[RMDB]
RNA sequence: GGGAACGACUCGAGUAGAGUCGAAAACGAUCAGUACGUUCGCGUACUGAUCGAAGCUACUGGAGACAGUAGCAAGUCUAAGACCUUGUUAAGUGGAAACAAGGAAAAAUGGAGGAAGGUCGGACCUCCAUACUUAGACAACCGCUAACCGGCCAAAGAUUAAUGGGCCAUUCGUGGCCCAUUAAUCAAAAGAAACAACAACAACAAC
Reactivity to 2A3 in 0.01 (KOAc 150mM, MgCl2 10mM, bicine 150mM(pH8.5), 24C), signal-to-noise 1, nucleotides 027 to 156: c000g000a000u000c000a000g000u000a000c000g060u070u130c270g020c010g060u010a000c020u020g000a000u000c000g000a000a000g010c000u000a000c010u000g000g020a040g020a040c000a010g030u000a000g000c000a000a030g000u000c000u000a010a010g000a130c010c000u010u000g030u000u110a140a170g130u190g200g090a110a000a050c010a000a000g000g000a050a090a050a020a010u010g010g010a010g020g000a150a190g020g000u000c040g010g090a300c000c000u000c000c000a000u020a020c000u000u000a010g000a000c040a040a040c040c010g030c180u110a060a020c000c000g000g000c000c010a040a010a010